[RMDB]
RNA sequence: GGGAACGACUCGAGUAGAGUCGAAAAUGUACGUACCUAGAUACUAGGAGCCAUGUGACGCGCGAUCUAUGUCGCACGAUGCGUACCCAUGUAGACGUACCUCUAGGCCAUGUGUCUAGGAUCAUGCGACAGUAACCCUGUUCGCAGGGUUACUGUCAAAAGAAACAACAACAACAAC
Reactivity to 2A3 in 0.01 (KOAc 150mM, MgCl2 10mM, bicine 150mM(pH8.5), 24C), signal-to-noise 3, nucleotides 027 to 126: u130g000u030a020c060g020u020a030c020c020u020a050g030a110u140a140c040u030a050g170g020a060g060c060c020a070u110g060u070g050a060c020g010c000g020c020g020a040u020c080u300a070u300g030u000c010g000c020a030c100g160a080u260g010c040g010u130a210c010c020c010a060u150g080u080a050g030a130c020g000u000a020c000c020u060c020u050a030g010g000c020c030a120u140g090u040g010u000c010u000a000g000g070a040u090c030a030u090g020c030
Reactivity to DMS in 0.01 (KOAc 150mM, MgCl2 10mM, bicine 150mM(pH8.5), 24C), signal-to-noise 3, nucleotides 027 to 126: u010g000u000a010c040g020u010a190c010c000u000a020g000a130u010a060c040u000a100g000g000a190g010c130c050a120u010g010u010g010a090c050g000c040g020c010g000a030u000c200u000a100u030g010u000c010g010c010a090c110g010a080u000g000c040g000u000a090c070c070c030a080u000g000u000a090g000a060c030g000u000a010c020c180u000c110u000a090g000g000c010c020a230u000g010u000g000u010c010u000a000g030g000a120u000c080a070u000g020c300